This 177-nucleotide RNA was probed chemically with DMS and 2A3.
RNA sequence: GGGAACGACUCGAGUAGAGUCGAAAAACUCGUGGCUGCCUAGUACGCUAGGCAGCCACGAGAGAAUCUUUUCACAAAAGACUUUAUCCGACAAUUCAUCAUCUGUCAAUUGUGGAUUUGAAUGCAAUAUAGUAACAAGCUUCGGCUUGUUACUAUAAAAAGAAACAACAACAACAAC
Reactivity to DMS in 0.01 (KOAc 150mM, MgCl2 10mM, bicine 150mM(pH8.5), 24C), signal-to-noise 1, nucleotides 027 to 126: a060c020u000c040g190u010g060g090c030u020g090c000c000u040a040g050u010a130c080g000c000u020a000g000g020c170a040g060c050c030a010c000g010a000g000a070g000a070a050u000c000u000u030u000u000c000a100c040a050a010a030a170g020a030c010u000u000u020a070u010c020c050g040a030c110a070a030u030u000c040a160u000c070a010u020c270u000g000u000c000a000a220u000u000g010u020g030g000a000u030u000u010g040a060a080u040g010c120a030a100
Reactivity to 2A3 in 0.01 (KOAc 150mM, MgCl2 10mM, bicine 150mM(pH8.5), 24C), signal-to-noise 2, nucleotides 027 to 126: a000c000u000c010g010u000g000g020c000u030g000c000c000u000a000g030u080a030c240g040c150u000a000g000g000c040a000g010c000c000a000c000g030a000g000a000g000a010a020u030c000u030u060u080u050c050a040c000a120a120a070a040g000a030c000u060u130u180a080u070c050c010g100a020c030a080a220u180u080c040a210u030c010a030u090c180u110g060u050c030a000a040u040u040g020u010g020g040a000u090u060u070g170a130a030u120g060c020a130a000

Conditions: 150 mM KOAc, 10 mM MgCl2 and 150 mM bicine (pH 8.5), 24 C.